[RMDB]
RNA sequence: GGGAACGACUCGAGUAGAGUCGAAAAUUCUUGUCAACUUAGCAGUACGGUUCAACGGGUCUUCCUACCGAAAAUUCAUAAAUUCUAUCACGGGGCAACUAGACAAGGAAACACCCACUAACACCACCCAGCAAGUAUAUUUCGAUAUACUUGCUGGAAAAGAAACAACAACAACAAC
Reactivity to DMS in 0.01 (KOAc 150mM, MgCl2 10mM, bicine 150mM(pH8.5), 24C), signal-to-noise 2, nucleotides 027 to 126: u000u010c010u000u000g010u000c050a120a150c200u000u000a130g020c020a100g020u010a090c070g010g000u000u000c080a120a170c050g010g020g010u000c010u000u000c030c000u000a050c140c070g000a050a100a120a120u000u010c110a100u020a030a090a040u000u000c030u000a050u010c070a090c090g000g000g000g000c070a040a000c070u000a100g000a030c040a050a040g000g000a030a030a160c080a080c000c000c000a090c220u000a030a070c080a050c130c210a070c140
Reactivity to 2A3 in 0.01 (KOAc 150mM, MgCl2 10mM, bicine 150mM(pH8.5), 24C), signal-to-noise 3, nucleotides 027 to 126: u000u000c000u000u010g020u030c000a080a070c120u090u090a070g000c030a030g050u150a050c020g050g040u040u100c010a110a030c040g030g010g010u010c000u040u000c000c010u020a040c040c030g090a130a040a010a070u080u050c040a060u170a270a210a040u250u020c050u120a120u120c040a010c090g010g010g000g010c010a020a000c010u000a010g000a050c010a020a010g020g010a000a090a000c030a020c000c020c020a010c030u070a060a010c030a020c020c020a010c100